[RMDB]
This 207-nucleotide RNA was probed chemically with 2A3 and DMS. Conditions: 150 mM KOAc, 10 mM MgCl2 and 150 mM bicine (pH 8.5), 24 C.

RNA sequence: GGGAACGACUCGAGUAGAGUCGAAAAGGAUGCUUGUCCCUGGAGAGUUUUUAGGGUUUAAAGCAUCUGUCUAGAAUGUCUUGAGAGUGUCCUUGGGGAUAGGGUGAUAGAGGUGCUUGCUUGUGCUAAGGUUUGUUCCAGGAUACCCUGUUCAGCACCGUAUACUACUAUUCGUAGUAGUAUACGGAAAAGAAACAACAACAACAAC
Reactivity to 2A3 in 0.01 (KOAc 150mM, MgCl2 10mM, bicine 150mM(pH8.5), 24C), signal-to-noise 7, nucleotides 027 to 156: g010g000a000u000g000c010u030u020g020u030c000c010c000u010g040g040a160g060a160g100u080u030u050u130u300a100g030g000g000u060u170u190a080a030a000g000c010a000u000c010u000g010u000c010u010a080g030a180a070u070g050u060c030u040u100g040a060g000a010g040u070g020u050c020c030u040u070g010g000g020g030a020u080a070g020g040g010u060g030a060u070a080g060a040g020g030u050g010c030u040u030g010c010u040u070g020u050g040c030u060a060a070g020g020u040u070u060g040u070u050c020c010a000g040g000a030u060a130c020c000c000u020g030u050u050c030a020g030c040a020
Reactivity to DMS in 0.01 (KOAc 150mM, MgCl2 10mM, bicine 150mM(pH8.5), 24C), signal-to-noise 3, nucleotides 027 to 156: g020g020a030u000g000c010u020u000g010u000c000c000c000u000g010g010a070g010a250g020u000u000u000u010u000a030g010g040g010u010u010u000a080a030a040g010c000a010u000c000u000g010u000c060u000a140g010a100a070u000g010u000c050u010u000g010a120g010a090g010u000g020u000c010c030u000u000g050g010g010g000a090u000a060g010g010g020u000g010a110u000a070g000a110g030g010u000g020c030u000u000g020c060u000u000g020u000g030c040u000a080a110g010g020u000u000u000g010u010u000c030c000a130g000g010a160u000a080c020c010c020u000g010u000u000c020a110g010c080a250
For DMS the reverse transcriptase was MarathonRT.
The data come from the RNA Mapping Database (RMDB), library OK3TST.